Record summary
This 177-nucleotide RNA was probed chemically with DMS and 2A3. For 2A3 the reverse transcriptase was SuperScript II with manganese. The 2A3 profile rests on 1,341 reads. It was measured as part of the RMDB library OK2TST.
[RMDB]
RNA sequence: GGGAACGACUCGAGUAGAGUCGAAAAAUGCAAGUGUUAAAUCAAUUUGGGUUGCCUCAGAUUGCAGCGCAUUGAUUAUCAGAUUUAAAAUUGCUCCAAUCAAAGACUCUCCAUGUAUGGAGGAUUACUAAUUAGUACGCUUCGGCGUACUAAUUAGAAAAGAAACAACAACAACAAC
Reactivity to DMS in 0.01 (KOAc 150mM, MgCl2 10mM, bicine 150mM(pH8.5), 24C), signal-to-noise 2, nucleotides 027 to 126: a060u010g010c030a020a010g010u000g010u000u000a010a050a020u010c020a040a100u000u010u010g010g000g030u000u000g000c030c080u010c200a110g020a120u020u000g020c020a020g010c020g010c020a040u010u000g020a150u020u010a080u000c150a090g000a060u000u000u000a020a030a070a070u000u000g010c010u000c020c010a060a110u010c150a090a070a110g000a100c110u000c000u000c000c000a040u000g000u030a080u010g020g000a020g000g000a050u010u000a120
Reactivity to 2A3 in 0.01 (KOAc 150mM, MgCl2 10mM, bicine 150mM(pH8.5), 24C), signal-to-noise 2, nucleotides 027 to 126: a000u140g000c010a020a020g050u000g040u210u040a050a050a000u010c030a020a060u040u000u010g120g010g000u000u020g000c000c020u190c040a110g070a250u120u230g000c000a010g040c110g020c130a010u020u060g030a070u100u120a080u190c050a030g070a080u030u080u160a030a050a040a070u010u020g020c010u000c040c020a080a110u090c080a030a150a080g070a060c010u020c000u010c160c010a040u130g090u200a120u040g070g000a000g010g000a020u040u060a020